Chemical mapping of a 177-nucleotide RNA with DMS and 2A3. The reactions ran in a buffer of 150 mM KOAc, 10 mM MgCl2 and 150 mM bicine (pH 8.5), at 24 C. In probing experiments dimethyl sulfate is read out at A N1 and C N3, which are open when not base-paired. Source: RMDB library OK2TST, as collected in RNAgym. For 2A3 the reverse transcriptase was SuperScript II with manganese. The DMS profile rests on 2,579 reads.
RNA sequence: GGGAACGACUCGAGUAGAGUCGAAAAGGACACCGGCCAAGGACAUUUACAGCAAAAAUCGGUGAGGCAGACGGUGCUGUCCGAGGUCGUGCUAGAACGCACGGAAUUGGAGAUAUCGUAUGCCCCGAACGCGUAUCAAGUUCGCUUGAUACGCGUUAAAAGAAACAACAACAACAAC
Reactivity to DMS in 0.01 (KOAc 150mM, MgCl2 10mM, bicine 150mM(pH8.5), 24C), signal-to-noise 3, nucleotides 027 to 126: g000g000a100c070a040c040c050g010g000c030c020a080a080g010g010a090c090a070u000u010u000a060c130a070g000c070a050a040a060a110a060u010c040g000g020u020g000a080g000g020c010a010g000a030c010g010g020u000g010c150u000g000u000c000c000g030a000g020g030u000c020g000u000g010c010u000a090g000a090a130c270g000c010a000c000g020g010a030a030u010u000g030g010a180g000a060u020a030u010c010g000u000a020u000g000c010c010c020c030g000
Reactivity to 2A3 in 0.01 (KOAc 150mM, MgCl2 10mM, bicine 150mM(pH8.5), 24C), signal-to-noise 2, nucleotides 027 to 126: g030g010a030c020a010c040c010g000g000c070c030a040a060g060g030a030c000a030u130u160u180a130c050a080g080c060a020a040a080a070a110u100c060g090g000u140g040a130g020g000c010a000g010a020c010g020g000u050g040c070u120g140u010c000c000g000a010g000g020u070c000g000u000g000c000u070a090g090a260a040c100g040c000a000c000g000g020a060a020u020u020g030g000a020g000a010u020a010u040c000g000u010a010u000g000c000c000c010c000g020